[RMDB]
RNA sequence: GGGAACGACUCGAGUAGAGUCGAAAAGCUGUGCCUAGGUAAGCCUAUAUCUGGGCGCACUACAGGCACUAUGUCGCAUCAUGGUCCCUGUGAACUCGAAGCUUGAUGCGACAAGUUUUGAGUGAUCUCAGACACUAUAGGCUUAGUUCGUGAGAGCCGAGUCCAGUAUGUUCGCAUACUGGAUUCGAAAAGAAACAACAACAACAAC
Reactivity to 2A3 in 0.01 (KOAc 150mM, MgCl2 10mM, bicine 150mM(pH8.5), 24C), signal-to-noise 9, nucleotides 027 to 156: g040c050u040g030u050g050c000c010u030a050g070g000u030a020a010g010c000c010u030a020u010a030u080c030u020g000g000g000c000g020c000a000c000u180a110c020a030g020g050c050a010c050u100a190u180g010u020c020g000c030a020u030c000a010u060g050g060u130c030c020c040u090g070u070g110a110a070c050u040c130g050a070a020g040c020u020u010g010a010u020g030c010g020a010c000a000a000g000u010u020u050u070g030a010g000u020g060a070u020c010u000c010a010g010a040c050a020c130u030a010u010a030g010g030c010u020u020a030g040u210u050c080g020u080g070a110g000a000g030c010
Reactivity to DMS in 0.01 (KOAc 150mM, MgCl2 10mM, bicine 150mM(pH8.5), 24C), signal-to-noise 5, nucleotides 027 to 156: g030c040u000g040u000g000c030c020u000a100g010g000u000a040a130g020c000c000u000a060u000a040u000c040u000g010g010g030c070g020c040a030c030u000a100c040a060g020g000c070a070c040u000a070u000g030u000c070g020c080a060u000c020a040u000g010g010u000c040c010c010u000g010u010g020a130a070c060u000c020g000a040a050g000c020u010u000g000a080u000g010c080g030a100c000a020a020g020u000u000u000u000g010a080g020u000g010a130u000c010u000c010a050g010a060c140a130c140u000a080u000a030g030g020c030u000u000a090g010u000u000c070g030u000g010a150g010a100g020c090